[RMDB]
RNA sequence: GGGAACGACUCGAGUAGAGUCGAAAAGGGUAUAGUAGUCCAGGACGUUAUAGGAGAGUUAAGUCAGGCUAUACCCGAUCUUCAACAACCGGAAGUUCAAGCGAAUGUUUUUUCUCUGGUGUCACAGUUAGUGCAUGCUAUCAUCGGUACUAGCCUAGUGGCCUAAAAUAUUCGUAUUUUAGGCCACAAAAGAAACAACAACAACAAC
Reactivity to DMS in 0.01 (KOAc 150mM, MgCl2 10mM, bicine 150mM(pH8.5), 24C), signal-to-noise 2, nucleotides 027 to 156: g000g040g030u000a010u000a040g010u010a130g020u020c060c030a160g020g000a070c070g010u000u000a080u020a150g030g010a100g010a120g040u010u000a100a110g000u010c050a140g050g000c010u000a060u000a070c010c000c010g000a050u000c040u000u000c070a070a120c050a110a100c020c040g020g000a010a110g000u000u000c000a100a150g000c070g000a100a060u010g010u000u000u000u000u010u010c040u010c020u000g000g020u000g020u000c050a120c140a090g020u000u010a060g030u030g010c000a050u000g020c080u000a130u000c090a070u000c110g030g040u020a010c010u000a050g010c040c040u020a210
Reactivity to 2A3 in 0.01 (KOAc 150mM, MgCl2 10mM, bicine 150mM(pH8.5), 24C), signal-to-noise 4, nucleotides 027 to 156: g010g000g000u020a010u010a010g060u010a020g090u060c080c060a070g130g000a020c050g010u120u120a110u150a140g130g050a100g020a030g060u130u110a120a000g010u020c030a030g110g000c000u000a000u000a010c010c000c000g000a010u010c000u110u100c040a080a100c030a050a080c050c040g070g020a000a040g020u090u130c070a090a010g040c020g120a120a090u100g060u000u020u000u000u120u010c050u010c000u030g060g020u050g060u110c030a020c010a110g030u050u050a000g010u020g040c040a080u100g000c040u060a070u220c040a040u100c040g010g000u000a000c000u030a020g000c010c010u030a040
Structure probing data (DMS and 2A3) for a 207-nucleotide construct. High 2A3 reactivity points to a flexible backbone, as in loops and unpaired stretches. The reactions ran in a buffer of 150 mM KOAc, 10 mM MgCl2 and 150 mM bicine (pH 8.5), at 24 C. For 2A3, 2,405 sequencing reads were counted.